[RMDB]
RNA sequence: GGGAACGACUCGAGUAGAGUCGAAAAAUGAUGUGAGUGCAUUCCGUGAUCUGAAACCUUUACCAUUCUUUUAUUAUUCUACUACACCAUGUGAAGUGCAUGGUAAUGGUAGUAUGAUAGAGGAUAUUCAAUCUUUAACGUUCGCGUUAAAGAUUGAAAAAGAAACAACAACAACAAC
Reactivity to DMS in 0.01 (KOAc 150mM, MgCl2 10mM, bicine 150mM(pH8.5), 24C), signal-to-noise 1, nucleotides 027 to 126: a110u000g000a090u000g000u010g010a160g000u000g000c050a080u000u010c080c040g000u000g010a050u000c030u000g000a110a170a060c070c020u000u000u000a060c100c070a100u030u000c000u010u000u000u000a000u000u000a030u000u010c000u000a020c000u000a140c170a030c000c000a010u020g010u000g020a090a140g020u000g020c000a000u000g000g000u020a060a080u020g010g030u000a000g000u000a010u000g000a000u000a040g000a020g000g000a040u010a100u000
Reactivity to 2A3 in 0.01 (KOAc 150mM, MgCl2 10mM, bicine 150mM(pH8.5), 24C), signal-to-noise 2, nucleotides 027 to 126: a020u080g030a040u050g070u050g110a040g060u070g010c030a040u090u000c020c020g040u060g030a060u020c040u070g020a070a070a090c030c000u060u090u070a040c040c000a100u090u000c000u000u010u010u000a010u000u010a010u020u010c000u010a010c000u000a020c010a010c040c000a010u010g010u020g240a300a160g130u090g190c000a000u000g000g000u000a010a010u100g010g000u000a000g000u010a000u000g000a000u000a010g020a000g000g000a000u020a070u080